Notes:
Chemical mapping of a 177-nucleotide RNA with 2A3. Source: RMDB library OK1LIB, as collected in RNAgym. 2A3 adducts were read by reverse transcription with SuperScript II with manganese.

RNA sequence: GGGAACGACUCGAGUAGAGUCGAAAACUGAGUGCAUCGAUAGCUCCGCAGACGCGCUCGUCGUAUCCCCUUAUGUGGUAGCGGAACUCGACUAUCUCGUCGCCACCCGGGUAGGUGUCGAUGCCGACGUGGUGUGCUCCUUCGGGAGCACACCACGAAAAGAAACAACAACAACAAC
Reactivity to 2A3 in 0.01 (KOAc 150mM, MgCl2 10mM, bicine 150mM(pH8.5), 24C), signal-to-noise 2, nucleotides 027 to 126: c030u080g040a000g100u180g020c000a010u050c000g010a030u010a040g060c010u000c060c000g000c060a020g030a080c020g050c010g000c020u000c070g000u010c000g010u010a200u050c000c000c030c010u130u150a040u190g220u130g070g030u100a040g030c010g000g000a160a190c050u000c000g010a010c000u010a110u140c030u000c030g050u060c040g030c020c020a030c050c040c010g060g030g020u080a050g000g090u000g000u000c010g080a010u040g010c000c030g080a100